[RMDB]
RNA sequence: GGGAACGACUCGAGUAGAGUCGAAAACUCUUGAUCUCUGUAGCUGGAAAUGUAGAUUGCCCCUCAUUCCUUUGUAGUCAGGAGACCACAUCCAGAAUUAGAAGCCAUGUGUAAACGUUAACUAAUGUAUCUCUUUUUGCAUUUUUCCACUGAACUACGACCGAUAAAAUUUCGAUUUUAUCGGUCGAAAAGAAACAACAACAACAAC
Reactivity to 2A3 in 0.01 (KOAc 150mM, MgCl2 10mM, bicine 150mM(pH8.5), 24C), signal-to-noise 3, nucleotides 027 to 156: c040u050c020u000u070g070a100u050c030u000c030u080g070u090a030g050c060u020g020g040a070a140a100u080g030u120a060g050a280u100u300g150c020c020c010c000u010c010a070u060u000c030c000u090u080u100g100u090a050g020u030c060a020g000g030a010g030a020c010c010a010c030a040u030c000c040a000g030a110a140u100u110a030g040a150a000g010c020c030a050u050g060u000g020u100a030a040a100c040g030u020u080a030a000c030u030a120a010u060g050u060a080u030c060u010c000u080u030u010u010u090g010c000a010u000u010u030u100u070c010c010a090c100u060g120a080a000c000u220a030
Reactivity to DMS in 0.01 (KOAc 150mM, MgCl2 10mM, bicine 150mM(pH8.5), 24C), signal-to-noise 2, nucleotides 027 to 156: c010u000c030u010u020g010a110u000c020u000c010u000g000u010a190g010c030u010g030g000a040a040a120u000g050u000a060g030a130u010u020g010c050c060c040c030u000c020a090u000u000c020c030u010u010u020g040u000a050g040u010c060a100g000g010a160g010a110c010c020a050c070a100u000c050c040a210g000a100a080u000u010a070g000a090a130g000c010c020a090u000g020u020g010u000a030a080a100c050g010u000u010a070a080c080u000a080a090u010g000u000a100u010c020u000c020u000u000u000u000u000g030c010a280u020u010u000u010u020c010c010a090c050u010g010a060a090c020u000a240